[RMDB]
RNA sequence: GGGAACGACUCGAGUAGAGUCGAAAAGAUAUGGAUUUGACCCAGCCACUCAGCAACAGCUCGGAAACGAGACAUGCUGAAAUACGCUGCAAAUCCUAAGUCAAACUCUGCGGUUCGCCGCAGAGAACCUACUAGUGUAGUUCGCUACACUAGUAGGAAAAGAAACAACAACAACAAC
Reactivity to DMS in 0.01 (KOAc 150mM, MgCl2 10mM, bicine 150mM(pH8.5), 24C), signal-to-noise 9, nucleotides 027 to 126: g010a050u000a300u010g000g010a010u000u000u000g010a200c210c250c060a030g020c000c100a150c170u000c000a000g010c000a030a090c280a150g010c000u010c000g000g000a070a070a180c000g000a010g000a030c090a140u000g010c000u000g000a010a040a070u000a110c300g000c000u000g000c010a010a000a000u000c000c000u000a060a100g010u000c030a120a090a170c000u000c000u000g010c000g010g010u000u010c240g010c000c000g000c000a000g000a000g000a040a070
Reactivity to 2A3 in 0.01 (KOAc 150mM, MgCl2 10mM, bicine 150mM(pH8.5), 24C), signal-to-noise 7, nucleotides 027 to 126: g020a020u060a060u140g030g000a020u020u010u040g080a130c130c050c020a000g020c030c030a080c070u030c010a010g000c010a010a120c020a230g060c010u000c000g030g040a070a050a050c010g010a010g050a040c020a070u080g000c000u000g010a020a030a000u180a030c060g000c000u010g000c010a000a000a010u010c000c000u030a120a020g040u030c020a010a010a140c010u000c000u000g000c000g000g100u030u080c300g040c110c000g000c000a000g000a000g000a000a010
The record gives the reactivity of an RNA of 177 nucleotides to DMS and 2A3. The reactions ran in a buffer of 150 mM KOAc, 10 mM MgCl2 and 150 mM bicine (pH 8.5), at 24 C. DMS adducts were read by reverse transcription with MarathonRT. Source: RMDB library TTRDEL, as collected in RNAgym. 2A3 adducts were read by reverse transcription with SuperScript II with manganese.